Source: RMDB library M2PK50, as collected in RNAgym. An RNA of 177 nucleotides, treated with 2A3 and DMS and read out base by base. The reactions ran in a buffer of 150 mM KOAc, 10 mM MgCl2 and 150 mM bicine (pH 8.5), at 24 C. For DMS, 842 sequencing reads were counted.
[RMDB]
RNA sequence: GGGAACGACUCGAGUAGAGUCGAAAAGGAGUACUCUUCGGAGUACUCCAGCUACCGAGAAUCUUCCUCGGUAUAAAAAAGAAACCCUUGGAAACAAGGGAAAUACGGCAGGGUUCGCCCUGCCGAAGUUCUUGAUUGGAUUCGUCCAAUCAAGAACAAAAGAAACAACAACAACAAC
Reactivity to 2A3 in 0.01 (KOAc 150mM, MgCl2 10mM, bicine 150mM(pH8.5), 24C), signal-to-noise 1, nucleotides 027 to 126: g000g000a040g050u130a020c020u050c030u070u090c300g010g020a030g000u010a000c010u000c000c000a000g000c000u020a000c000c010g010a010g000a080a070u050c080u160u030c070c000u000c010g000g010u000a100u100a050a080a020a000a000a000g090a050a070a010c050c000c000u000u010g030g020a060a010a030c010a000a000g020g000g000a030a050a000u020a010c000g000g000c010a000g000g050g030u040u060c120g090c010c000c020u010g010c000c000g000a000a010
Reactivity to DMS in 0.01 (KOAc 150mM, MgCl2 10mM, bicine 150mM(pH8.5), 24C), signal-to-noise 1, nucleotides 027 to 126: g000g010a000g020u000a010c000u000c000u000u020c210g020g000a000g000u010a000c000u000c000c000a030g020c120u010a010c000c000g000a020g020a130a190u000c170u000u010c100c010u000c010g000g010u000a040u010a000a030a090a040a070a060g000a110a100a160c000c000c000u000u010g010g000a130a140a280c000a010a000g000g000g020a020a010a040u010a100c010g010g000c000a030g010g010g020u000u010c210g000c000c000c000u000g010c000c000g000a010a110